[RMDB]
RNA sequence: GGGAACGACUCGAGUAGAGUCGAAAAGGAGACUCCAUCUUUACAGGCUGUACUGGCUCUUGGAACAAGGUCACUCAAAUUGCUAACAUGUUCUUGGAACAGACUCAGCAUUCCCUUAACUUUGUGGCGGCGUCGAACUUCGGUUCGACGAAAAGAAACAACAACAACAAC
Reactivity to 2A3 in 0.01 (KOAc 150mM, MgCl2 10mM, bicine 150mM(pH8.5), 24C), signal-to-noise 5, nucleotides 027 to 129: g040g010a030g020a010c030u040c020c010a080u000c060u070u090u130a070c060a030g000g070c000u020g000u050a020c040u050g080g000c050u000c000u020u010g010g000a000a000c020a080a060g060g030u060c020a040c070u200c020a060a110a260u240u160g020c060u050a020a050c020a130u050g000u000u000c000u030u050g050g000a010a000c000a030g130a300c000u030c020a000g020c000a030u000u000c000c000c000u010u050a110a090c050u030u060u120g100u010g050g000c050g000g000
Reactivity to DMS in 0.01 (KOAc 150mM, MgCl2 10mM, bicine 150mM(pH8.5), 24C), signal-to-noise 4, nucleotides 027 to 129: g050g020a030g050a000c080u020c000c000a140u040c060u000u000u000a100c150a060g000g050c040u020g010u040a110c050u060g000g060c000u010c040u010u020g000g050a040a020c040a000a000g050g050u040c150a100c120u080c170a060a160a170u050u010g040c070u070a030a080c120a130u010g040u010u010c020u040u060g000g000a070a050c070a000g020a180c120u010c100a000g030c040a140u000u020c030c000c050u020u030a060a120c090u020u030u010g030u000g000g020c000g020g000